This 207-nucleotide RNA was probed chemically with DMS and 2A3.
For DMS, 2,944 sequencing reads were counted.
The reactions ran in a buffer of 150 mM KOAc, 10 mM MgCl2 and 150 mM bicine (pH 8.5), at 24 C.
DMS adducts were read by reverse transcription with MarathonRT.
For 2A3 the reverse transcriptase was SuperScript II with manganese.
It was measured as part of the RMDB library OK3TST.

[RMDB]
RNA sequence: GGGAACGACUCGAGUAGAGUCGAAAAUCAGGUAGGAUUGUUGAUUGCAGUGCUUUUGCAUGGCUGUUCCAUGUUGCAUGGCCUUCCUCAGCAUGGCAGCCUCAGUGUAAUUGGACUUACUUGGUGGCUGAGAGCUCUAAAAGUUAGUGUCCCAGUAUAUACUGCACCCAUUCGUGGGUGCAGUAUAAAAAGAAACAACAACAACAAC
Reactivity to DMS in 0.01 (KOAc 150mM, MgCl2 10mM, bicine 150mM(pH8.5), 24C), signal-to-noise 1, nucleotides 027 to 156: u000c020a070g020g030u000a080g000g040a110u000u000g030u010u010g000a150u010u000g020c000a090g050u010g020c100u010u000u010u000g010c000a120u020g000g010c020u010g000u010u000c070c000a040u000g040u010u000g000c080a100u000g070g010c080c090u000u010c010c030u010c030a060g000c000a050u000g030g020c050a030g020c010c000u020c050a050g010u000g030u000a040a090u000u000g000g020a120c050u000u000a020c020u010u000g030g020u000g000g000c090u000g040a070g000a200g010c030u000c010u000a030a100a100a110g030u000u000a050g030u010g010u000c010c000c000a150g010u000a200
Reactivity to 2A3 in 0.01 (KOAc 150mM, MgCl2 10mM, bicine 150mM(pH8.5), 24C), signal-to-noise 2, nucleotides 027 to 156: u040c020a000g000g030u010a010g010g040a270u050u180g050u040u050g010a030u010u020g000c010a040g230u020g080c140u140u190u240u280g030c060a110u170g000g000c020u000g010u180u030c000c000a000u000g010u000u010g060c140a120u300g020g000c080c030u150u250c120c000u000c010a000g000c020a020u000g010g000c000a000g000c000c000u010c000a050g010u000g000u000a000a000u030u080g020g060a030c020u010u000a000c000u010u010g000g000u020g020g020c110u080g190a080g000a040g170c000u020c020u050a070a080a010a000g030u030u100a040g000u080g070u080c000c000c000a010g080u000a010